[RMDB]
RNA sequence: GGGAACGACUCGAGUAGAGUCGAAAAGAUAUGGAGCCUGAGUGGACAUGAAUAUCACCUCGGAAACGAGGUGUAUUCAACAGCCACCAGGCUCCUAAGUCAAAAGAACUAUGUUCGCAUAGUUCAAGUUAGAUUAGUGGUUCGCCACUAAUCUAACAAAAGAAACAACAACAACAAC
Reactivity to 2A3 in 0.01 (KOAc 150mM, MgCl2 10mM, bicine 150mM(pH8.5), 24C), signal-to-noise 3, nucleotides 027 to 126: g000a000u010a000u050g000g000a010g010c020c000u080g020a110g040u020g010g040a060c120a300u300g010a040a000u080a060u250c010a000c010c000u020c010g000g030a020a010a010c000g000a000g000g000u010g000u010a000u000u000c000a000a020c050a020g010c000c000a000c000c000a000g000g000c010u000c000c010u000a010a000g000u010c000a010a010a040a190g010a000a000c000u010a030u020g060u070u130c300g000c150a000u010a000g000u000u010c010a020a020
Reactivity to DMS in 0.01 (KOAc 150mM, MgCl2 10mM, bicine 150mM(pH8.5), 24C), signal-to-noise 5, nucleotides 027 to 126: g010a030u000a170u000g010g000a020g020c000c000u000g000a190g020u000g000g020a030c140a150u020g000a030a010u000a010u020c020a010c010c000u000c010g020g000a030a030a070c000g010a000g000g010u010g010u010a000u000u000c000a090a090c250a180g000c010c000a000c000c010a010g010g010c000u000c000c000u000a000a040g000u010c020a110a100a130a120g000a010a010c000u000a000u000g020u000u020c250g020c020a020u000a000g010u000u000c000a060a110

Description:
Chemical mapping of a 177-nucleotide RNA with 2A3 and DMS. The RNA was probed in 150 mM KOAc, 10 mM MgCl2 and 150 mM bicine (pH 8.5) at 24 C. For 2A3, 8,697 sequencing reads were counted. It was measured as part of the RMDB library TTRDES. Values cover nucleotides 27 to 126.